[RMDB]
RNA sequence: GGGAACGACUCGAGUAGAGUCGAAAAGACAAAAUUAUCCAGACGGCCAUCGAUGCCUUCGGAAGGGUGGACAUCUUGAUCAACAACGCCGGGAUCUUGAGAGACAUCAGUUUCUCGAAGAUGACCGAUUCUUCUCCAAAUUCGUUUGGAGAAGAAUAAAAGAAACAACAACAACAAC
Reactivity to 2A3 in 0.01 (KOAc 150mM, MgCl2 10mM, bicine 150mM(pH8.5), 24C), signal-to-noise 3, nucleotides 027 to 126: g060a010c040a030a170a040a060u170u120a070u080c040c020a010g010a040c040g040g000c000c010a070u070c040g080a100u140g040c020c000u070u040c040g060g020a030a020g090g000g010u050g000g030a010c010a030u030c030u040u060g040a050u070c020a010a080c000a040a010c060g080c050c000g010g000g010a010u000c000u010u020g020a020g000a000g000a010c010a050u240c070a230g020u010u020u010c010u000c020g030a020a010g010a020u080g110a130c020c000g000
Reactivity to DMS in 0.01 (KOAc 150mM, MgCl2 10mM, bicine 150mM(pH8.5), 24C), signal-to-noise 5, nucleotides 027 to 126: g010a140c100a060a070a100a070u010u010a080u000c020c040a080g010a090c090g010g000c010c030a100u000c100g010a110u000g010c040c020u000u010c060g030g010a080a090g010g020g020u000g000g000a070c070a030u000c020u000u010g010a040u000c070a040a060c080a030a060c100g030c300c020g010g000g000a080u000c010u010u010g010a020g000a030g010a020c000a150u010c230a110g010u000u000u000c000u010c000g010a030a010g000a020u000g020a110c010c020g000
This 177-nucleotide RNA was probed chemically with 2A3 and DMS. For DMS, 4,993 sequencing reads were counted. Values cover nucleotides 27 to 126. The reactions ran in a buffer of 150 mM KOAc, 10 mM MgCl2 and 150 mM bicine (pH 8.5), at 24 C.